Description: An RNA of 177 nucleotides, treated with DMS and 2A3 and read out base by base. For 2A3 the reverse transcriptase was SuperScript II with manganese.
[RMDB]
RNA sequence: GGGAACGACUCGAGUAGAGUCGAAAACGCUUUAUUCACUGGGGUCGACAACUCUGGGGAGAAAAGGGAGGAUCGGCUGGGAAGAGUAGAUCCUAUGGGAAUCCCUGGCUACCCCUAAUGUCCAGCCGGUUAGGUAUUUCUUCGGAAAUACCUAACCAAAAGAAACAACAACAACAAC
Reactivity to DMS in 0.01 (KOAc 150mM, MgCl2 10mM, bicine 150mM(pH8.5), 24C), signal-to-noise 1, nucleotides 027 to 126: c160g000c060u010u000u000a070u040u000c000a070c170u010g010g010g020g010u010c080g010a050c110a050a120c100u000c000u010g050g000g000g010a020g010a010a190a070a070g010g030g050a050g000g000a050u000c050g010g070c040u000g010g030g000a130a200g000a090g000u000a080g000a030u010c010c010u010a050u000g000g000g010a250a100u030c010c000c000u000g030g010c090u010a030c000c000c000c040u010a000a080u030g010u000c050c010a050g010c110c100
Reactivity to 2A3 in 0.01 (KOAc 150mM, MgCl2 10mM, bicine 150mM(pH8.5), 24C), signal-to-noise 2, nucleotides 027 to 126: c030g040c020u130u150u120a110u120u140c050a040c110u050g050g030g010g000u040c040g040a050c050a170a060c060u060c050u080g000g000g000g050a020g030a020a150a000a030g050g020g030a010g020g000a020u020c040g020g030c040u060g100g060g070a090a060g030a050g140u060a020g000a030u030c000c010u030a100u100g040g020g040a070a070u030c000c000c030u000g000g000c010u060a070c000c010c020c000u000a020a000u040g010u020c020c010a000g030c040c040